Structure probing data (2A3 and DMS) for a 177-nucleotide construct. DMS adducts were read by reverse transcription with MarathonRT. Source: RMDB library 15KREP, as collected in RNAgym. In probing experiments dimethyl sulfate is read out at A N1 and C N3, which are open when not base-paired. The RNA was probed in 150 mM KOAc, 10 mM MgCl2 and 150 mM bicine (pH 8.5) at 24 C.
[RMDB]
RNA sequence: GGGAACGACUCGAGUAGAGUCGAAAACAUCAAGACCAUGUGUCUCUAACUGUGCCACUCUGUGGUUCAGGAAACCUGGUUGAAAAACUUUCACCAUGGUUCAUGGAUGGCGAAAAUGCCUAUGAAGCAUUCAGACAACGUUCGCGUUGUCUGAAUGAAAAGAAACAACAACAACAAC
Reactivity to 2A3 in 0.01 (KOAc 150mM, MgCl2 10mM, bicine 150mM(pH8.5), 24C), signal-to-noise 1, nucleotides 027 to 126: c030a120u130c090a080a000g100a160c010c000a020u010g020u010g000u040c000u000c000u050a060a030c000u010g020u020g000c000c000a020c020u300c090u110g000u020g010g000u030u020c010a000g020g000a030a000a000c010c000u030g040g000u100u260g110a020a030a000a020a040c070u030u010u020c010a000c020c020a000u210g000g000u020u000c000a010u020g010g040a050u020g010g000c020g170a130a090a090a120u180g000c000c020u090a190u160g100a040a010g050
Reactivity to DMS in 0.01 (KOAc 150mM, MgCl2 10mM, bicine 150mM(pH8.5), 24C), signal-to-noise 1, nucleotides 027 to 126: c160a130u010c160a050a190g010a150c010c020a000u000g010u000g010u000c030u000c020u010a120a210c010u000g000u020g000c010c010a030c000u050c190u040g000u000g020g000u000u000c000a010g010g010a070a040a040c020c000u000g000g040u000u000g000a020a010a110a130a210c280u000u000u000c000a020c000c000a000u020g000g000u000u000c020a010u010g000g000a170u000g000g010c000g010a060a050a090a110u020g000c000c010u000a100u030g020a120a140g020